Chemical mapping of a 207-nucleotide RNA with 2A3.
The RNA was probed in 150 mM KOAc, 10 mM MgCl2 and 150 mM bicine (pH 8.5) at 24 C.
For 2A3 the reverse transcriptase was SuperScript II with manganese.
It was measured as part of the RMDB library OK3TST.
[RMDB]
RNA sequence: GGGAACGACUCGAGUAGAGUCGAAAAGACGGCAGUUCGGAACUAUAAGGACAACGAACAGAUCCCAAGUUGUCCUUAUAACUGGACAGAGUACUGUUAGUUGUAUAGCAUACUCUUGGGAUCUGUUGUAUGCUAUAUAGUUCUAACUGUACUGUCAGGACCCAUAAAUCUUCGGAUUUAUGGGUCCAAAAGAAACAACAACAACAAC
Reactivity to 2A3 in 0.01 (KOAc 150mM, MgCl2 10mM, bicine 150mM(pH8.5), 24C), signal-to-noise 2, nucleotides 027 to 156: g000a000c000g000g010c000a010g000u030u120c160g070g000a000a000c010u000a000u030a140a150g130g060a070c020a070a040c130g090a010a000c000a000g000a030u010c020c000c010a000a010g100u130u060g020u040c040c000u030u000a030u030a050a060c070u130g080g010a000c000a010g060a020g070u150a270c040u010g000u040u010a030g010u030u070g120u140a140u080a100g000c010a020u020a220c000u000c010u010u030g010g000g000a020u000c010u010g000u000u000g010u040a120u040g010c000u000a010u000a000u000a260g030u000u000c000u000a000a000c000u000g000u020a160c020u070g010u000c010a010